[RMDB]
RNA sequence: GGGAACGACUCGAGUAGAGUCGAAAAGCGUUUAGCUUCGGCUAAACGCAAAUAAGCUGACCAGCUAUGAGGUCAUACAUCGUCAUAGCACAAAGAAAGAGAAAACACCUCUGUUCGCAGAGGUGAAGUCGUUGUAAAUCUUCGGAUUUACAACGACAAAAGAAACAACAACAACAAC
Reactivity to 2A3 in 0.01 (KOAc 150mM, MgCl2 10mM, bicine 150mM(pH8.5), 24C), signal-to-noise 2, nucleotides 027 to 126: g000c000g000u000u000u000a000g020c000u000u030c210g050g000c000u020a000a000a000c030g000c020a010a000a010u000a010a010g160c070u020g000a010c000c000a000g000c000u010a010u020g000a000g030g000u000c010a020u150a190c110a110u130c140g040u010c000a000u010a000g130c020a020c040a020a090a030g170a130a100a000g170a000g090a000a110a000a030c000a000c010c000u040c000u000g020u060u050c220g000c060a000g000a010g030g010u000g000a000a000
Reactivity to DMS in 0.01 (KOAc 150mM, MgCl2 10mM, bicine 150mM(pH8.5), 24C), signal-to-noise 1, nucleotides 027 to 126: g000c000g010u000u000u000a000g040c000u010u010c250g010g050c000u000a000a000a000c000g000c000a050a020a150u000a070a120g000c230u000g000a000c000c010a280g000c000u000a000u010g000a030g000g010u000c000a020u020a070c300a010u000c160g030u020c000a010u000a030g030c000a180c270a030a090a210g000a030a100a070g000a170g000a020a220a150a160c000a000c000c000u000c000u020g030u000u010c140g040c000a010g010a000g000g000u000g000a010a060